Chemical mapping of a 177-nucleotide RNA with 2A3 and DMS. The reactions ran in a buffer of 150 mM KOAc, 10 mM MgCl2 and 150 mM bicine (pH 8.5), at 24 C. Source: RMDB library OK1LIB, as collected in RNAgym.
RNA sequence: GGGAACGACUCGAGUAGAGUCGAAAAUGCAUGCUAAUGGGGAUUAUGCAAUCUUUAAAUGCUUACACUUGGAUGAAAGAUCACCAAGUCUUGUUUUUAGGUGUAACUACUGGGUACUGUGGUGCCCCGUAAUGCCCGACUUCGGUCGGGCAUUACGAAAAGAAACAACAACAACAAC
Reactivity to 2A3 in 0.01 (KOAc 150mM, MgCl2 10mM, bicine 150mM(pH8.5), 24C), signal-to-noise 3, nucleotides 027 to 126: u070g000c000a000u000g060c080u240a130a120u210g050g000g010g060a020u010u100a070u300g060c030a010a070u010c030u050u120u060a150a120a040u120g040c010u000u030a020c010a000c000u000u000g030g000a090u030g240a130a030a090g040a060u090c010a010c080c040a090a110g030u000c010u050u300g250u110u010u000u000u000a000g000g000u000g000u050a060a070c030u030a020c100u190g020g000g030u000a040c060u090g090u170g300g120u020g010c000c000c000
Reactivity to DMS in 0.01 (KOAc 150mM, MgCl2 10mM, bicine 150mM(pH8.5), 24C), signal-to-noise 1, nucleotides 027 to 126: u040g000c090a010u060g000c090u000a020a120u020g000g050g000g000a030u010u000a060u000g010c180a060a070u000c080u000u000u060a000a160a060u030g000c230u040u000a030c000a000c000u000u000g020g000a030u000g000a030a020a180g020a020u000c070a130c290c280a040a160g010u000c030u000u000g010u000u000u000u000u060a000g000g000u000g000u000a180a070c070u030a080c130u000g000g030g000u000a000c000u030g000u030g000g000u050g000c030c030c000

DMS adducts were read by reverse transcription with MarathonRT. The 2A3 profile rests on 782 reads. For 2A3 the reverse transcriptase was SuperScript II with manganese. The DMS profile rests on 1,046 reads.